[RMDB]
RNA sequence: GGGAACGACUCGAGUAGAGUCGAAAAAUCAUAUGGGUCAAUUUGUAUCAAGACAAGAGCUGUCUGGGUAGGUCUUUUGUAUGUGAGCUCUAUAAUGGCGUACUUGAUUCUUAUCUAACUUAAAGGGCGAGUAUACGUCUUUCGAGACGUAUACUCGAAAAGAAACAACAACAACAAC
Reactivity to DMS in 0.01 (KOAc 150mM, MgCl2 10mM, bicine 150mM(pH8.5), 24C), signal-to-noise 2, nucleotides 027 to 126: a050u010c050a040u010a140u020g000g030g010u000c050a090a100u000u000u000g010u000a080u010c070a110a040g000a060c050a070a080g030a070g040c070u000g000u010c040u000g000g010g020u010a040g000g020u000c030u020u000u000u000g000u000a060u010g030u000g000a070g010c060u000c050u000a090u010a050a070u010g000g010c030g010u010a020c050u010u000g000a080u010u020c020u000u000a060u000c100u020a080a090c110u000u010a050a080a120g010g000g000
Reactivity to 2A3 in 0.01 (KOAc 150mM, MgCl2 10mM, bicine 150mM(pH8.5), 24C), signal-to-noise 1, nucleotides 027 to 126: a020u090c060a010u110a090u120g010g050g050u000c020a080a130u070u030u090g080u060a090u020c020a090a060g030a020c000a020a070g020a030g100c020u000g000u080c030u020g040g060g040u060a020g030g110u060c000u000u080u030u100g040u060a170u060g080u000g030a020g030c020u000c020u040a040u020a040a120u110g080g000c020g000u000a040c000u020u040g040a050u150u000c020u040u060a050u070c040u010a000a190c020u050u220a150a120a000g020g050g060